[RMDB]
RNA sequence: GGGAACGACUCGAGUAGAGUCGAAAAUGGUCCAUACUAGAAGGAUCUAGCAAAACAAUUGGCCAAAACAGCUGAGGAUUCCCUGCCAGAGAAGUAUGUUGGCAGGAACUAUUCUUCUGGGGAGGAACGAUUAAGCUCAAUUCGUUGAGCUUAAUCGAAAAGAAACAACAACAACAAC
Reactivity to 2A3 in 0.01 (KOAc 150mM, MgCl2 10mM, bicine 150mM(pH8.5), 24C), signal-to-noise 6, nucleotides 027 to 126: u090g040g000u000c020c010a040u090a130c050u050a030g050a090a040g070g020a040u050c080u060a020g030c060a030a060a030a150c030a050a170u050u060g050g010c010c020a050a060a060a090c030a050g010c030u040g020a010g010g040a040u050u060c030c000c000u000g000c010c000a020g030a010g020a300a070g180u220a130u300g160u100u030g040g000c000a000g000g010a000a000c010u020a030u030u000c010u000u000c020u010g020g000g010g050a060g040g000a060a040
Reactivity to DMS in 0.01 (KOAc 150mM, MgCl2 10mM, bicine 150mM(pH8.5), 24C), signal-to-noise 6, nucleotides 027 to 126: u000g000g000u010c020c020a090u020a160c050u010a050g010a080a110g010g000a050u000c060u010a040g010c120a080a080a080a090c150a100a120u000u000g010g000c000c040a040a070a120a090c190a080g000c080u000g000a040g000g000a180u000u010c090c000c010u000g000c000c000a040g010a090g000a100a110g030u010a050u010g010u000u000g010g000c010a020g000g000a020a050c090u000a030u000u000c010u000u000c020u000g000g000g000g000a220g000g010a060a130
Annotation
The record gives the reactivity of an RNA of 177 nucleotides to 2A3 and DMS. Values cover nucleotides 27 to 126.